[RMDB]
RNA sequence: GGGAACGACUCGAGUAGAGUCGAAAAGAGUCAGUCGUGUUCUUUGGAUUCAGCCAGUUCUGCUGGUCUACUUCCUUUGAACGGGUCAACAUCAGUUUUGUCCGGUGGAUAAAGGCAGUAGGAAUGUAGCUUCUCCGGAAGUGUUAUAGCCUAUUGUCACAUACACUGGGUGAGACUGAGGACUGCAGCUCGCCUUUAUGGCCGACCUUCGGGUACGUUCGAGCUUAGGAUGUUGACAUAAUGGCUUUAAACGACCCGUCUUGAAAAGUUCAGAAUUCGUUCUGAACAAAAGAAACAACAACAACAAC
Reactivity to 2A3 in 0.01 (KOAc 150mM, MgCl2 10mM, bicine 150mM(pH8.5), 24C), signal-to-noise 6, nucleotides 027 to 266: g010a000g020u040c020a010g010u050c030g090u040g010u120u000c010u020u020u010g010g000a020u090u050c040a010g000c000c000a010g010u130u120c130u300g040c010u010g010g010u020c010u010a050c050u030u020c000c000u000u010u020g000a000a000c020g030g070g000u010c010a010a010c000a030u020c000a010g010u000u010u010u020g020u000c000c000g000g010u010g020g040a070u090a120a200a160g010g000c000a000g000u010a000g000g020a070a060u050g000u010a010g000c000u010u000c030u020c070c200g150g020a010a010g020u060g090u210u160a120u110a080g020c010c000u000a010u000u000g010u000c000a000c000a020u080a010c000a010c000u010g000g000g010u010g000a000g000a000c000u000g000a010g000g040a030c020u030g030c010a020g010c010u020c020g010c000c000u100u250u140a220u280g040g010c010c010g020a040c010c000u070u090c160g100g010g010u070a190c020g020u040u120c070g010a000g010c010u050u070a040g040g030a030u040g010u020u010g000a000c000a010u170a050a120u070g000g000c000u050u050u100a150a190a100c060g050a050c000c010c000g060u030c060u060u060g110a150a150a050a080
Reactivity to DMS in 0.01 (KOAc 150mM, MgCl2 10mM, bicine 150mM(pH8.5), 24C), signal-to-noise 4, nucleotides 027 to 266: g000a050g010u010c010a010g000u010c060g000u020g000u000u000c000u000u000u010g000g000a030u000u010c240a200g000c000c010a010g010u000u030c250u040g000c000u000g010g000u000c020u010a140c250u010u000c010c000u010u010u000g010a020a020c000g010g010g000u000c020a030a030c030a070u000c020a020g010u000u000u000u010g000u010c010c000g000g030u000g000g000a060u010a090a200a100g010g000c010a000g010u000a000g000g000a020a060u020g010u000a300g010c000u000u000c010u010c300c220g020g020a010a010g000u000g000u000u000a020u010a070g010c010c000u000a000u000u010g010u000c010a050c260a070u000a070c010a000c010u000g010g000g010u000g000a010g010a010c000u000g010a010g010g010a060c010u000g000c220a050g010c010u000c020g010c030c020u000u010u000a050u030g020g000c040c020g010a030c020c030u010u020c160g020g000g020u010a040c020g010u000u010c200g010a030g000c010u000u000a100g000g000a100u010g000u000u020g000a020c020a090u010a120a090u000g000g000c000u000u000u020a050a160a210c210g000a130c010c010c010g000u010c050u000u000g000a110a130a160a180